[RMDB]
RNA sequence: GGGAACGACUCGAGUAGAGUCGAAAACUUCGUAAUCCUCGAAAUUGCUGGUUGCUAUCAGCGUGAUUCGGGAUUGUACACUUGCAAGGCCACGAACAAGCAUGGUGAGGCCACGGUCUCUUGCAAAGUUCCAACAACAAUUCGUUGUUGUUGGAACAAAAGAAACAACAACAACAAC
Reactivity to DMS in 0.01 (KOAc 150mM, MgCl2 10mM, bicine 150mM(pH8.5), 24C), signal-to-noise 3, nucleotides 027 to 126: c060u000u020c110g010u010a060a020u000c010c000u010c030g010a020a030a120u020u000g010c010u000g020g000u000u030g020c300u020a040u000c000a010g000c010g010u000g010a150u000u000c020g000g000g000a020u010u010g010u000a040c190a100c210u000u000g010c030a050a070g010g020c040c060a140c070g000a140a090c170a090a120g000c070a070u010g020g020u000g020a140g020g000c030c040a060c150g010g000u010c060u000c020u000u000g010c060a060a050a130
Reactivity to 2A3 in 0.01 (KOAc 150mM, MgCl2 10mM, bicine 150mM(pH8.5), 24C), signal-to-noise 3, nucleotides 027 to 126: c010u080u070c030g060u070a030a000u020c000c020u070c070g030a060a050a060u130u120g000c010u010g010g070u070u210g130c160u160a020u060c010a010g010c050g040u100g040a080u040u030c010g000g010g000a000u000u000g010u050a030c060a020c040u030u020g000c010a040a050g040g000c010c000a040c070g050a100a030c080a110a000g090c070a070u110g130g000u100g070a050g080g000c020c000a000c020g050g000u020c020u010c010u030u030g020c010a090a020a040